An RNA of 177 nucleotides, treated with 2A3 and DMS and read out base by base. Conditions: 150 mM KOAc, 10 mM MgCl2 and 150 mM bicine (pH 8.5), 24 C. Source: RMDB library M2PK90, as collected in RNAgym. For 2A3, 2,484 sequencing reads were counted.
RNA sequence: GGGAACGACUCGAGUAGAGUCGAAAAACAUAGGAUGGGCCAUAGGCGCUGCGGUUCAUCAUCUUGCCCUCGCCAGGACCGCUCCCGUUCUACUACUUGGCGUCGCGGAUACCGGGUUGGAAAACAAACUACCUAUUUUCUUCGGAAAAUAGGUAGUAAAAGAAACAACAACAACAAC
Reactivity to 2A3 in 0.01 (KOAc 150mM, MgCl2 10mM, bicine 150mM(pH8.5), 24C), signal-to-noise 2, nucleotides 027 to 126: a000c020a050u140a040g100g040a030u050g030g040g020c020c010a050u060a120g100g000c080g000c070u030g000c020g050g000u060u040c030a020u040c020a030u030c050u050u120g040c000c000c000u030c030g010c010c000a010g000g000a010c010c010g000c020u040c000c020c000g010u100u030c050u100a100c000u000a000c040u030u060g030g040c010g010u050c010g010c030g030g020a030u050a150c020c000g040g020g030u070u120g090g030a030a110a030a040c040a010a160
Reactivity to DMS in 0.01 (KOAc 150mM, MgCl2 10mM, bicine 150mM(pH8.5), 24C), signal-to-noise 5, nucleotides 027 to 126: a120c050a090u010a100g000g020a150u010g010g010g010c020c020a090u000a130g010g010c040g010c050u000g020c080g000g000u000u010c050a070u010c070a070u000c100u000u000g000c030c010c020u000c040g010c030c010a060g010g010a070c050c020g000c040u010c040c020c020g010u000u010c060u000a090c110u000a060c080u000u000g000g010c060g020u010c100g000c030g000g010a110u000a040c050c030g010g010g010u000u000g010g000a070a050a060a110c170a080a080